[RMDB]
RNA sequence: GGGAACGACUCGAGUAGAGUCGAAAAUUUAACACUUGUUAACGUGAAUACCAAGGAAGUUACUCAGGUAUUCAAAUAUUAUACUUUCAUGAUUUAGAAAGCUUCUAAAUUCAUGACAUUUCUCCUUAGUUGAUAUAAAGUUCGCUUUAUAUCAACUAAAAGAAACAACAACAACAAC
Reactivity to 2A3 in 0.01 (KOAc 150mM, MgCl2 10mM, bicine 150mM(pH8.5), 24C), signal-to-noise 3, nucleotides 027 to 126: u060u040u040a080a000c050a060c120u160u300g040u030u100a040a020c020g010u000g080a010a000u000a010c000c020a030a010g070g020a120a170g180u220u120a100c030u050c090a060g000g000u000a000u000u010c000a000a010a000u050a020u050u070a110u060a110c030u070u110u000c010a000u000g030a020u010u010u010a000g010a020a200a070g100c090u030u000c000u010a030a030a020u160u130c000a010u000g010a000c030a040u010u040u010c030u030c040c000u000u000
Reactivity to DMS in 0.01 (KOAc 150mM, MgCl2 10mM, bicine 150mM(pH8.5), 24C), signal-to-noise 2, nucleotides 027 to 126: u000u030u010a000a040c030a280c150u000u010g000u000u000a020a040c290g020u000g000a000a010u000a000c010c000a160a130g000g040a110a190g000u000u000a020c130u020c120a150g010g020u010a010u000u000c000a030a030a100u010a030u000u000a110u000a080c120u000u000u000c000a010u010g010a070u000u000u000a010g000a030a170a290g000c300u000u000c000u010a000a000a030u010u020c000a000u000g010a010c300a080u000u000u000c000u000c130c150u000u000
Structure probing data (2A3 and DMS) for a 177-nucleotide construct. For 2A3, 2,344 sequencing reads were counted. Conditions: 150 mM KOAc, 10 mM MgCl2 and 150 mM bicine (pH 8.5), 24 C. Source: RMDB library RFMREP, as collected in RNAgym. For DMS, 726 sequencing reads were counted.